[RMDB]
RNA sequence: GGGAACGACUCGAGUAGAGUCGAAAAAUGGGAAAAAUUAUACGGUGCCUGUAGAAGAUCUGCCCAGCAUCAUUGCUGGUGUGCACGGUAUUGAGGCUUUCUCGGUGGUGCGCUACACCAACGCUGACACUAGACGUUGUUUCGACAACGUCUAGUGAAAAGAAACAACAACAACAAC
Reactivity to 2A3 in 0.01 (KOAc 150mM, MgCl2 10mM, bicine 150mM(pH8.5), 24C), signal-to-noise 5, nucleotides 027 to 126: a000u120g000g010g040a050a030a030a030a030u180u100a060u030a060c060g120g010u020g000c000c010u060g020u050a040g020a200a020g050a190u060c020u030g020c000c000c000a000g000c000a010u170c040a100u110u300g000c010u010g010g040u060g080u170g040c000a010c030g020g010u010a020u030u160g040a040g010g120c150u000u040u040c020u010c000g000g050u050g000g030u050g010c100g020c030u050a030c010a010c010c010a060a030c060g020c090u080g040a000
Reactivity to DMS in 0.01 (KOAc 150mM, MgCl2 10mM, bicine 150mM(pH8.5), 24C), signal-to-noise 4, nucleotides 027 to 126: a070u040g020g010g000a030a030a050a180a150u030u010a050u010a020c010g000g030u010g000c000c050u000g030u020a020g030a200a060g000a120u020c020u000g000c010c010c000a020g000c020a020u020c300a170u040u000g010c010u000g000g010u010g010u030g010c000a020c000g000g000u010a000u000u000g020a070g010g000c200u000u010u000c000u000c000g000g000u000g010g000u000g000c120g000c190u030a070c030a090c060c040a060a080c100g000c020u000g000a300